[RMDB]
RNA sequence: GGGAACGACUCGAGUAGAGUCGAAAAUGGGCCGUGUGCUUAACCAUGACAAGAUCUCCUUCUCUCCAACGUUGUUGCCAACUCAUGAUUCUCCUAACCUGUGCUUGGAGAGACGUGGACCCAGAGUAAAACGAAGGGUGCUUCGGCACCCUUCGAACAUAGACACACACUUCGGUGUGUGUCUAUGAAAAGAAACAACAACAACAAC
Reactivity to DMS in 0.01 (KOAc 150mM, MgCl2 10mM, bicine 150mM(pH8.5), 24C), signal-to-noise 1, nucleotides 027 to 156: u000g000g030g050c000c050g050u000g030u000g030c070u000u010a060a030c060c020a070u000g000a180c030a130a120g000a080u010c050u000c040c010u010u000c020u000c000u000c000c000a030a060c150g000u000u000g030u000u010g000c010c060a010a100c000u010c000a110u010g010a150u000u000c020u000c030c000u010a050a080c060c050u010g000u000g010c090u000u000g020g010a080g000a060g000a030c090g020u000g020g020a100c030c000c010a300g010a100g040u000a040a060a030a090c020g000a020a020g010g020g030u000g020c010u000u000c300g000g000c030a020c010c000c000u000u000c010g010a020a130
An RNA of 207 nucleotides, treated with DMS and read out base by base. Reactivities are given for positions 27 through 156.